[RMDB]
RNA sequence: GGGAACGACUCGAGUAGAGUCGAAAAACAAUUUCAACUCAUCUUGAUAAGGUUAAUUUGACCUUGGGUGCACUACGCGGCUCUCCACCCGACUGUACUAACACAGGGCUUCGAUUUAGCCAUAUGAGUUUCGAUAUACGUUCGCGUAUAUCGAAACAAAAGAAACAACAACAACAAC
Reactivity to DMS in 0.01 (KOAc 150mM, MgCl2 10mM, bicine 150mM(pH8.5), 24C), signal-to-noise 2, nucleotides 027 to 126: a060c150a070a150u010u010u000c130a060a030c050u010c030a070u000c080u000u000g000a110u060a020a070g010g100u000u000a040a130u000u020u020g010a030c030c010u000u000g000g000g000u010g010c090a100c170u000a090c140g010c060g000g000c030u000c060u010c050c120a100c020c010c010g000a120c150u020g000u000a010c090u000a160a040c120a040c080a030g000g030g030c030u010u000c130g000a060u010u030u020a020g000c030c000a070u000a050u010g000a230
Reactivity to 2A3 in 0.01 (KOAc 150mM, MgCl2 10mM, bicine 150mM(pH8.5), 24C), signal-to-noise 7, nucleotides 027 to 126: a020c080a070a080u120u140u140c050a040a030c050u020c040a130u050c040u140u110g060a120u110a170a030g060g020u050u080a130a140u170u120u250g050a030c000c000u010u010g030g010g010u040g010c020a010c060u090a020c080g020c050g010g030c020u000c000u000c030c020a040c010c020c000g020a020c020u020g020u060a040c040u070a150a020c040a010c000a070g050g000g000c040u050u050c040g100a130u010u030u200a030g020c010c010a050u070a130u180g120a120

Conditions: 150 mM KOAc, 10 mM MgCl2 and 150 mM bicine (pH 8.5), 24 C. This 177-nucleotide RNA was probed chemically with DMS and 2A3. The 2A3 profile rests on 4,598 reads. Reactivities are given for positions 27 through 126.